[RMDB]
RNA sequence: GGGAACGACUCGAGUAGAGUCGAAAACGUGCGUACUGGGCCGCCGGCACAAUGUUCGACCCAGCCGUCUCAGAGGACGCGGUUCGACUACGAUCAGCCAGCCGGUCAGCGGGGUCCUCCUAGCUAGAAUCCACUCCGUAUUCGUACGGAGUGGAUUAAAAGAAACAACAACAACAAC
Reactivity to 2A3 in 0.01 (KOAc 150mM, MgCl2 10mM, bicine 150mM(pH8.5), 24C), signal-to-noise 1, nucleotides 027 to 126: c030g020u090g010c050g040u060a140c050u110g030g040g000c000c030g040c030c000g050g030c010a010c050a080a150u170g000u070u030c000g030a040c010c000c000a010g090c070c020g020u000c010u040c110a240g070a240g140g020a020c000g020c020g000g000u020u000c000g000a000c020u090a060c070g140a170u100c010a000g100c060c020a010g050c030c060g030g030u090c050a010g010c050g000g010g070g000u000c010c010u000c000c000u040a090g030c000u030a070g080
Reactivity to DMS in 0.01 (KOAc 150mM, MgCl2 10mM, bicine 150mM(pH8.5), 24C), signal-to-noise 2, nucleotides 027 to 126: c150g020u020g020c030g000u000a060c070u000g020g000g000c040c090g010c090c030g040g020c010a090c120a110a080u000g010u010u000c030g000a030c080c000c020a130g070c260c070g000u010c000u030c090a170g000a150g030g020a030c020g000c040g010g000u010u000c030g010a040c080u000a100c120g020a080u020c140a060g020c000c040a110g010c090c030g030g000u000c030a070g000c070g010g010g000g010u000c040c040u000c050c040u000a070g010c130u000a080g000
An RNA of 177 nucleotides, treated with 2A3 and DMS and read out base by base. In probing experiments dimethyl sulfate is read out at A N1 and C N3, which are open when not base-paired. For 2A3 the reverse transcriptase was SuperScript II with manganese. The DMS profile rests on 1,825 reads. It was measured as part of the RMDB library OK2TRN.